RNA sequence: GGGAACGACUCGAGUAGAGUCGAAAAAAGAAACAUUGUUUAUGCAAAGGCACUUCGCAAUGUGUGCUCAAACAUUGCUUAUUCAAACACGCAUCACAAUGUGCGACAAAGAAACAUUGUUAUAAGAUCCACUAAGUCGCCUUCGGGCGACUUAGAACAACGUUACAAUGUUCGCAUUGUAACGUUGAAAAGAAACAACAACAACAAC
Reactivity to 2A3 in 0.01 (KOAc 150mM, MgCl2 10mM, bicine 150mM(pH8.5), 24C), signal-to-noise 6, nucleotides 027 to 156: a000a000g160a010a070a010c020a020u030u040g040u070u110u080a070u080g030c040a050a090a120g140g010c020a010c030u060u050c060g000c030a040a020u010g000u000g010u040g030c070u070c130a070a080a010c010a030u020u020g000c000u060u110a120u130u160c080a050a090a040c080a020c110g000c010a010u030c040a020c000a060a020u060g000u020g020c020g050a040c080a030a130a010g090a050a070a010c030a040u020u050g010u030u040a130u020a120a070g040a090u030c040c000a020c050u000a010a000g000u000c000g010c000c000u010u050c120g040g010g000c000g000a000c000u000u000a000g000a010a010
Reactivity to DMS in 0.01 (KOAc 150mM, MgCl2 10mM, bicine 150mM(pH8.5), 24C), signal-to-noise 2, nucleotides 027 to 156: a180a130g030a100a020a030c000a010u000u010g000u000u000u000a020u000g000c080a090a120a210g000g010c020a020c020u010u000c130g020c070a050a030u000g010u000g020u000g010c010u010c090a100a110a060c010a060u000u010g000c120u000u000a050u000u010c050a110a110a070c040a050c010g020c020a050u000c150a040c000a050a030u010g000u000g000c050g040a100c080a080a090a140g000a080a030a040c040a040u010u010g000u000u000a070u000a040a090g010a250u000c000c060a170c010u000a010a020g020u000c000g020c010c000u000u010c300g050g020g030c010g000a010c010u000u000a000g000a010a140

An RNA of 207 nucleotides, treated with 2A3 and DMS and read out base by base.
For 2A3 the reverse transcriptase was SuperScript II with manganese.
Values cover nucleotides 27 to 156.
For DMS the reverse transcriptase was MarathonRT.
The RNA was probed in 150 mM KOAc, 10 mM MgCl2 and 150 mM bicine (pH 8.5) at 24 C.
For 2A3, 6,298 sequencing reads were counted.
High DMS reactivity at an A or C suggests that its Watson-Crick edge is free.